RNA sequence: GGGAACGACUCGAGUAGAGUCGAAAAGAAGAAGUGCAGAAGAGUCCUGACAACCAGUCCCAGCUUGCAGCGGAGGCCGGCGCGGCCCUGAUAGGCAGCGUGAGGGAGGAGGCAACUGGCACUCCCGCUACGCCGAAUGAUUCGUCAUUCGGCGUAGAAAAGAAACAACAACAACAAC
Reactivity to 2A3 in 0.01 (KOAc 150mM, MgCl2 10mM, bicine 150mM(pH8.5), 24C), signal-to-noise 1, nucleotides 027 to 126: g100a040a010g060a110a010g020u030g000c020a020g010a250a010g000a100g090u040c010c010u080g040a070c060a130a050c050c030a040g100u030c010c000c010a020g010c020u040u130g000c010a060g040c050g030g080a120g030g000c010c020g130g020c170g020c080g040g020c020c000c000u030g040a070u090a150g080g000c030a010g010c030g060u090g040a210g050g000g000a030g010g030a020g000g050c010a000a030c030u030g080g000c020a010c040u030c020c000c000g010
Reactivity to DMS in 0.01 (KOAc 150mM, MgCl2 10mM, bicine 150mM(pH8.5), 24C), signal-to-noise 3, nucleotides 027 to 126: g020a130a090g010a110a050g010u010g010c040a060g010a130a130g030a140g020u010c020c030u000g020a110c140a090a160c080c070a120g000u000c020c020c010a160g000c070u000u000g020c080a080g020c040g000g000a100g030g000c020c020g000g020c120g020c050g000g000c000c000c030u000g010a080u000a090g010g000c040a040g030c020g020u000g020a170g000g000g010a090g000g010a110g010g010c060a050a110c060u000g010g010c060a080c030u000c000c000c020g000